[RMDB]
RNA sequence: GGGAACGACUCGAGUAGAGUCGAAAAGCUCAGUGUGUGUCGCCCCGUCGUCUAGUGCUGGUUCUAGGGCUGGGGCGUCAGCAUCCAGGUCUGAGGGGACGGGCAGUAUCUCGCCAUCAACGAUAAAGUGUGUGACCAAUUUCGAUUGGUCACACACAAAAGAAACAACAACAACAAC
Reactivity to DMS in 0.01 (KOAc 150mM, MgCl2 10mM, bicine 150mM(pH8.5), 24C), signal-to-noise 1, nucleotides 027 to 126: g010c000u000c020a060g010u000g000u000g020u000g010u000c010g060c010c010c000c000g050u000c010g010u000c000u020a040g040u000g010c120u000g030g000u000u030c010u000a030g010g000g000c000u020g070g000g020g000c000g000u000c080a140g000c020a070u020c100c040a070g020g030u000c030u000g000a130g000g000g000g010a070c130g020g000g000c090a150g000u000a020u000c030u000c030g000c070c070a090u000c090a060a050c070g040a100u000a050a060a070